[RMDB]
RNA sequence: GGGAACGACUCGAGUAGAGUCGAAAAGAUAUGGAUCCGGCCACAACAAGGCGCGGAUCGGAAACGAUCCGACCCGCUGUGGCGGAUCCUAAGUCAAAGCAACGAGACAGUUCGCUGUCUCGUUGCAGUCAACAACUCAGUUCGCUGAGUUGUUGACAAAAGAAACAACAACAACAAC
Reactivity to 2A3 in 0.01 (KOAc 150mM, MgCl2 10mM, bicine 150mM(pH8.5), 24C), signal-to-noise 4, nucleotides 027 to 126: g000a000u020a000u070g040g000a000u000c060c060g300g240c180c120a050c030a300a240c120a260a300g020g000c060g010c010g090g020a000u000c000g010g010a010a010a000c010g010a000u060c010c000g070a120c270c270c080g000c050u050g000u000g010g000c000g020g000a000u020c010c000u000a000a000g000u000c010a040a150a090g000c010a010a000c010g010a000g010a010c000a010g030u130u240c300g080c170u000g020u000c000u000c000g000u000u010g020c000a000
Reactivity to DMS in 0.01 (KOAc 150mM, MgCl2 10mM, bicine 150mM(pH8.5), 24C), signal-to-noise 3, nucleotides 027 to 126: g000a040u010a160u000g000g000a020u000c000c000g040g010c010c000a000c010a150a140c220a210a070g010g020c080g000c000g000g000a000u010c000g010g000a050a060a070c020g010a010u010c000c010g010a290c120c290c140g000c100u000g020u000g010g000c000g000g000a000u000c000c000u000a010a080g010u000c010a110a130a130g010c000a010a000c000g000a030g000a010c000a000g040u000u020c230g020c000u000g010u000c000u000c000g010u000u000g030c010a040